[RMDB]
RNA sequence: GGGAACGACUCGAGUAGAGUCGAAAAGAGUAUGAGGUCGAUAGAGAAAUAGAUGUAAAACAAGAAAAUGUAGUGUAUGAACAUGUAAAAAAUGAGGACGUUAUACUUAUAGAGUCAUGUUGGAACAAUAUACUUAAACAAAUUAAAAAAGAUAAAACACUAUAUAUGCAUUCGUGCAUAUAUAGUGAAAAGAAACAACAACAACAAC
Reactivity to DMS in 0.01 (KOAc 150mM, MgCl2 10mM, bicine 150mM(pH8.5), 24C), signal-to-noise 1, nucleotides 027 to 156: g010a090g010u000a010u000g000a080g020g050u000c010g020a130u010a090g010a150g010a020a090a140u000a050g020a100u000g010u000a040a050a050a090c020a120a110g000a070a090a060a040u010g020u010a060g000u010g080u010a070u010g000a070a060c020a040u000g020u000a000a050a120a080a060a030u030g020a070g020g030a050c060g010u000u010a150u000a030c110u000u000a070u000a050g000a100g010u000c000a010u000g050u000u000g000g000a040a050c020a070a070u010a110u010a020c020u000u000a040a030a140c020a030a060a110u010u040a000a030a040a040a070a140g000a140u000a070a110a080a070
Reactivity to 2A3 in 0.01 (KOAc 150mM, MgCl2 10mM, bicine 150mM(pH8.5), 24C), signal-to-noise 1, nucleotides 027 to 156: g050a040g010u040a010u050g030a000g020g010u040c040g040a070u040a060g090a000g040a080a050a010u110a030g050a040u060g010u090a020a030a050a030c050a040a020g100a030a070a030a000u140g040u090a010g020u030g000u040a000u060g010a030a000c000a020u070g040u180a070a080a000a030a030a060u050g000a010g000g010a000c020g010u050u080a010u000a070c010u090u010a060u030a140g020a000g030u060c040a000u020g060u040u030g000g000a000a020c020a020a000u070a030u030a170c020u050u080a020a050a010c070a060a160a050u110u250a090a030a030a010a010a010g010a010u070a070a180a030a000